[RMDB]
RNA sequence: GGGAACGACUCGAGUAGAGUCGAAAAGCAAAUCGUGUGAGCCAACUCAUCGAAGAUGGCUGGACAGUUAAUUUUAGUUAUGAUGGUGAACAAACUCUACCAAAUAAACUGGUUUUAAAGCAGGCUACCAUCAGGUACCAUUCGUGGUACCUGAUGGAAAAGAAACAACAACAACAAC
Reactivity to 2A3 in 0.01 (KOAc 150mM, MgCl2 10mM, bicine 150mM(pH8.5), 24C), signal-to-noise 2, nucleotides 027 to 126: g090c030a010a050a100u130c090g050u090g000u010g110a020g010c020c000a040a070c060u020c060a170u130c150g010a010a020g000a020u030g030g000c000u010g030g110a010c010a040g020u050u150a050a130u020u100u000u190a060g020u050u070a070u090g090a070u060g000g030u030g040a060a020c030a110a060a020c120u030c000u100a050c000c020a000a000a080u100a010a130a010c010u050g040g070u020u030u050u200a010a080a030g030c060a060g070g020c000u080a090
Reactivity to DMS in 0.01 (KOAc 150mM, MgCl2 10mM, bicine 150mM(pH8.5), 24C), signal-to-noise 2, nucleotides 027 to 126: g020c060a100a110a110u000c080g020u010g030u010g000a080g040c120c080a040a080c040u000c010a060u000c230g000a100a080g000a130u000g010g020c000u000g010g000a070c080a050g020u000u000a040a050u010u000u020u000a030g020u010u000a050u010g020a200u010g000g030u000g010a110a100c100a100a130a080c180u010c020u010a030c000c020a030a050a150u010a040a020a010c010u000g000g000u000u000u000u020a060a110a110g010c010a090g010g000c090u010a120